[RMDB]
RNA sequence: GGGAACGACUCGAGUAGAGUCGAAAAUAUGCGACCGACGGAUCCGGUAGGAUCCAACACGGAUCCACCUGGUCUUGACUAUAUGAGUCGCUAUUACGCAUGACGCCAGGUGCAGUGCUCCAGGAUCCUGCAAGGUGCAAUUCGUUGCACCUUGCAGAAAAGAAACAACAACAACAAC
Reactivity to 2A3 in 0.01 (KOAc 150mM, MgCl2 10mM, bicine 150mM(pH8.5), 24C), signal-to-noise 1, nucleotides 027 to 126: u160a090u160g020c010g010a020c000c010g010a020c000g000g000a010u010c000c010g020g020u050a250g060g010a000u000c010c000a030a040c100a070c070g010g020a000u000c020c010a000c020c030u000g000g000u000c000u010u140g020a030c030u020a010u080a120u300g100a090g060u000c000g010c020u000a010u000u070a050c040g000c010a020u050g060a040c040g040c060c020a080g090g000u040g080c020a010g080u010g080c030u030c020c010a030g010g020a030u070c010
Reactivity to DMS in 0.01 (KOAc 150mM, MgCl2 10mM, bicine 150mM(pH8.5), 24C), signal-to-noise 2, nucleotides 027 to 126: u000a010u010g000c000g030a000c030c020g000a240c110g000g000a000u000c000c130g000g000u000a100g020g000a000u000c010c000a050a060c300a170c220g000g000a000u000c000c000a070c000c000u000g000g000u000c020u000u000g050a170c160u000a070u010a080u020g010a170g000u000c000g050c010u000a040u030u000a120c160g030c050a070u000g020a060c150g000c030c030a060g000g000u000g010c040a050g000u000g020c010u000c010c050a110g030g010a080u000c070
This 177-nucleotide RNA was probed chemically with 2A3 and DMS. The reactions ran in a buffer of 150 mM KOAc, 10 mM MgCl2 and 150 mM bicine (pH 8.5), at 24 C.